RNA sequence: GGGAACGACUCGAGUAGAGUCGAAAAGGAUCUGAGUACUUAUAAGUGCGAAGUGAGUGAGGGUCUUACGAGCACGAAUUACAACCCUCUAUUAAGUAUCGAAGAUCGGCCGGAGAUCGAGAUACAACUAUUAGCCGGCGACUGUACGAAGAUCCGACGGUAUAUACCAUUUCGAUGGUAUAUACCGAAAAGAAACAACAACAACAAC
Reactivity to DMS in 0.01 (KOAc 150mM, MgCl2 10mM, bicine 150mM(pH8.5), 24C), signal-to-noise 4, nucleotides 027 to 156: g010g010a030u000c020u010g020a300g000u000a040c020u000u000a130u000a100a180g010u010g040c010g020a160a200g010u000g000a050g010u020g000a080g010g020g000u000c010u000u000a030c050g000a300g010c000a030c010g000a110a090u010u000a080c080a060a050c010c020c010u000c010u030a110u010u000a040a160g000u000a040u000c010g010a150a200g000a020u000c000g040g030c070c100g010g000a300g000a040u000c030g010a300g000a090u010a030c030a030a090c150u000a120u020u000a170g010c020c010g010g020c040g000a160c140u000g020u000a040c040g000a290a070g000a090u000c010c010g000a050
Reactivity to 2A3 in 0.01 (KOAc 150mM, MgCl2 10mM, bicine 150mM(pH8.5), 24C), signal-to-noise 9, nucleotides 027 to 156: g000g000a000u000c000u010g010a010g030u010a010c020u090u130a100u100a300a040g000u000g010c010g030a060a010g010u010g010a010g000u090g010a000g010g000g020u090c000u000u000a010c010g000a010g010c010a010c040g080a120a100u170u080a070c050a030a040c010c010c000u000c000u000a100u100u180a140a030g000u010a000u010c010g020a050a010g000a020u010c040g040g010c010c010g010g000a130g000a010u000c020g010a000g000a080u000a010c010a040a010c020u100a070u270u100a050g090c010c000g000g000c020g040a080c110u090g000u000a010c000g000a010a000g000a000u000c000c000g000a000